[RMDB]
RNA sequence: GGGAACGACUCGAGUAGAGUCGAAAAGUUUCAUGAAAUGUCGGCGUGACUUUAAAACUUUGUGCAUGUCCGCUUUUUGAAAUUAAUAAACCACUGAUGAUGUGGAGGUGGGAUAGUGGUGCGCUAACAUAGUCCGGAAUUUCGAUUCCGGACUAUGAAAAGAAACAACAACAACAAC
Reactivity to DMS in 0.01 (KOAc 150mM, MgCl2 10mM, bicine 150mM(pH8.5), 24C), signal-to-noise 3, nucleotides 027 to 126: g000u000u020u000c020a050u030g010a000a030a030u010g010u050c000g010g010c020g070u000g000a040c000u000u030u020a060a110a160a150c200u010u020u020g020u030g020c000a000u000g000u060c010c020g010c010u000u000u000u000u000g000a030a010a030u000u020a060a130u020a060a080a110c010c010a010c090u020g010a180u020g000a080u050g020u010g020g000a040g030g000u010g010g000g010a060u020a030g020u020g000g000u010g000c140g010c050u010a030a240
Reactivity to 2A3 in 0.01 (KOAc 150mM, MgCl2 10mM, bicine 150mM(pH8.5), 24C), signal-to-noise 1, nucleotides 027 to 126: g000u000u000u000c010a010u060g030a020a110a000u090g080u090c000g000g060c010g010u010g000a160c000u000u100u180a050a000a080a000c060u090u130u280g120u150g020c020a010u000g010u020c000c010g000c000u000u010u000u010u020g010a030a000a000u150u020a010a060u110a070a000a020c000c020a000c060u110g130a210u040g010a010u040g130u010g000g000a070g020g000u230g000g000g020a060u170a000g040u040g000g020u060g010c060g000c030u000a080a000